[RMDB]
RNA sequence: GGGAACGACUCGAGUAGAGUCGAAAAAUACAUACUGACACCGGUUGCUCAACAGGCUGUGUGGGACAAUAGAAUAACAAGGCUGUCAAUUUGAGCUUGACGGCUGCAAACCGAAUGGUGUGAAAUCGUAACCGGACUCACUUCGGUGAGUCCGGAACCAUAAGCCAUGAUUCGUCAUGGCUUAUGGAAAAGAAACAACAACAACAAC
Reactivity to 2A3 in 0.01 (KOAc 150mM, MgCl2 10mM, bicine 150mM(pH8.5), 24C), signal-to-noise 3, nucleotides 027 to 156: a000u130a030c040a030u100a050c010u090g070a020c020a030c030c000g060g030u060u070g020c030u040c040a050a130c040a120g090g000c080u030g010u030g030u040g100g000g020a010c030a050a070u080a100g100a090a110u110a130a000c040a080a010g030g000c010u000g010u020c010a000a010u100u060u170g060a050g030c010u000u000g010a010c000g020g000c010u020g020c030a110a030a000c040c030g060a070a080u130g010g000u010g000u020g040a040a030a050u140c090g010u050a060a030c000c010g000g000a000c000u000c000a000c000u020u050c140g030g000u010g010a000g000u000c000c000g000g000a000a000
Reactivity to DMS in 0.01 (KOAc 150mM, MgCl2 10mM, bicine 150mM(pH8.5), 24C), signal-to-noise 2, nucleotides 027 to 156: a090u000a090c070a120u000a150c050u000g000a090c030a090c030c020g000g060u000u000g010c080u020c020a100a090c040a110g010g000c020u000g020u000g020u000g010g000g040a110c050a100a120u010a160g030a120a100u010a030a150c060a080a120g030g000c000u030g010u010c010a020a070u000u000u000g020a170g030c300u000u000g010a050c020g020g040c010u020g000c100a040a060a080c030c040g000a080a190u010g010g030u000g000u010g000a030a100a150u010c050g010u000a130a150c000c000g020g000a050c000u000c000a010c010u010u000c270g040g030u020g000a020g040u000c000c000g070g000a000a020

The data come from the RNA Mapping Database (RMDB), library M2RFPK.
An RNA of 207 nucleotides, treated with 2A3 and DMS and read out base by base.
The reactions ran in a buffer of 150 mM KOAc, 10 mM MgCl2 and 150 mM bicine (pH 8.5), at 24 C.